[RMDB]
RNA sequence: GGGAACGACUCGAGUAGAGUCGAAAAGAUAUGGAAUGCAUAGUCCACGACUCCAUACUACGAGCUGGGAUCGGAAACGAUCCACAGCGAUGAGUAGUGGAGUCGUGGACUAUGCAUUCCUAAGUCACUCUGAAUGAAUGUUCGCAUUCAUUCAGAGAAAAGAAACAACAACAACAAC
Reactivity to DMS in 0.01 (KOAc 150mM, MgCl2 10mM, bicine 150mM(pH8.5), 24C), signal-to-noise 1, nucleotides 027 to 126: g000a010u000a300u010g000g010a000a010u000g020c000a010u000a020g000u000c000c000a000c010g000a020c000u000c000c000a090u000a050c020u000a050c050g010a300g010c000u000g000g000g000a010u000c020g030g000a100a060a250c000g020a020u000c010c000a110c020a020g010c010g000a140u010g020a040g000u000a040g000u010g000g020a000g020u010c000g000u000g000g010a000c010u010a010u000g000c010a000u020u000c000c000u000a000a040g010u000c020a260